An RNA of 177 nucleotides, treated with DMS and 2A3 and read out base by base.
It was measured as part of the RMDB libraries RFM100 and RFMREP.
For 2A3 the reverse transcriptase was SuperScript II with manganese.
RNA sequence: GGGAACGACUCGAGUAGAGUCGAAAAGCGUGCUAGUGAUGAUUAAAGAAGUUAAAAAUGGUGAAUCCUGGAUUAAUGUGCUCGCGUGCCGCUGUGUGCGCGCGCGGCUGGAGAUUUUUUUUUUCUCGAUCUAUUAGCUUUUCGAAGCUAAUAGAUCAAAAGAAACAACAACAACAAC
Reactivity to DMS in 0.01 (KOAc 150mM, MgCl2 10mM, bicine 150mM(pH8.5), 24C), signal-to-noise 4, nucleotides 027 to 126: g020c080g020u020g010c040u010a060g010u010g010a060u010g010a080u010u020a060a080a080g010a090a120g000u010u020a020a050a070a090a070u010g000g020u000g010a070a080u000c010c010u000g000g010a140u010u010a050a070u020g010u010g010c010u020c020g010c000g020u000g000c110c020g030c110u030g020u020g020u010g010c020g020c010g000c040g020c010g010g000c030u000g000g000a100g000a000u000u000u000u000u000u010u010u010u000u010c040u020c120
Reactivity to 2A3 in 0.01 (KOAc 150mM, MgCl2 10mM, bicine 150mM(pH8.5), 24C), signal-to-noise 8, nucleotides 027 to 126: g030c010g010u040g020c030u030a040g020u030g060a090u020g010a020u110u140a080a080a050g100a070a020g060u110u210a080a050a050a060a070u150g060g010u100g080a040a040u080c000c010u020g030g030a050u050u110a130a070u170g060u070g060c050u060c040g000c010g010u020g060c100c040g040c090u060g100u070g060u110g170c000g000c000g000c000g010c000g000g000c030u030g030g010a050g000a030u040u000u000u000u000u000u000u010u080u020c040u030c040